[RMDB]
RNA sequence: GGGAACGACUCGAGUAGAGUCGAAAAGAUAUGGAGAUCUACCCACCCUUUAACACAACUAUGAAGAUCAAACGAUCGGAAACGAUCGUUUGAUUGGAGUUGUGGGAGAGGAGGAUCUCCUAAGUCACAUACUUAUAUGGUUCGCCAUAUAAGUAUGAAAAGAAACAACAACAACAAC
Reactivity to 2A3 in 0.01 (KOAc 150mM, MgCl2 10mM, bicine 150mM(pH8.5), 24C), signal-to-noise 5, nucleotides 027 to 126: g090a090u260a250u290g000g010a010g000a000u000c010u120a300c030c010c000a040c010c010c010u040u070u040a060a000c000a000c000a010a030c020u090a300u300g080a110a020g010a020u000c000a000a000a010c000g000a010u000c010g030g040a080a090a020c010g000a000u000c000g000u000u000u000g000a000u000u000g000g020a020g000u010u010g000u020g000g010g020a090g000a010g000g000a010g000g000a000u000c000u010c000c000u020a090a020g200u170c060a020
Reactivity to DMS in 0.01 (KOAc 150mM, MgCl2 10mM, bicine 150mM(pH8.5), 24C), signal-to-noise 8, nucleotides 027 to 126: g000a130u010a170u010g010g000a010g000a010u010c000u000a150c020c020c030a300c140c000c010u000u000u000a210a120c000a010c010a000a010c000u000a180u010g020a170a210g000a000u000c000a000a000a010c010g010a000u000c000g000g000a130a080a250c000g000a000u000c000g010u000u000u000g000a000u000u000g010g000a010g010u000u000g020u000g010g000g000a080g010a010g000g010a090g020g000a010u000c000u000c000c000u010a020a050g000u000c170a280